[RMDB]
RNA sequence: GGGAACGACUCGAGUAGAGUCGAAAACGUCUUUACGGGCCUCACUCAUAUAGAUGCCCACUUUCUAUCCCAGACAAAGCAGAGUGGGGAGAACUUUCCUUACCUGGUAGCGUACCAAGCCACCGUGGCACUAUGUCUCUUUCGAGAGACAUAGUGCAAAAGAAACAACAACAACAAC
Reactivity to DMS in 0.01 (KOAc 150mM, MgCl2 10mM, bicine 150mM(pH8.5), 24C), signal-to-noise 2, nucleotides 027 to 126: c060g040u010c030u000u020u000a040c140g010g010g000c070c010u050c000a190c050u040c090a060u070a060u020a140g000a170u020g000c060c000c000a060c030u000u030u010c050u020a140u000c000c000c000a090g000a010c160a130a160a150g000c130a030g000a120g000u000g000g010g050g000a090g030a120a110c190u030u000u030c020c000u000u010a050c060c000u040g000g040u000a000g020c020g000u000a110c060c140a090a160g010c000c020a090c090c030g060u000g000
Reactivity to 2A3 in 0.01 (KOAc 150mM, MgCl2 10mM, bicine 150mM(pH8.5), 24C), signal-to-noise 5, nucleotides 027 to 126: c020g060u050c040u030u170u170a040c060g050g020g020c000c030u030c000a040c010u100c060a080u120a030u090a160g080a060u090g010c010c030c000a010c000u040u060u030c050u070a130u060c010c010c000a020g030a060c090a060a120a020g090c070a020g080a010g050u030g010g030g010g010a070g020a070a100c010u060u070u020c000c000u050u040a070c000c020u020g000g080u050a020g010c020g030u020a070c010c060a050a020g010c010c000a030c020c000g060u070g090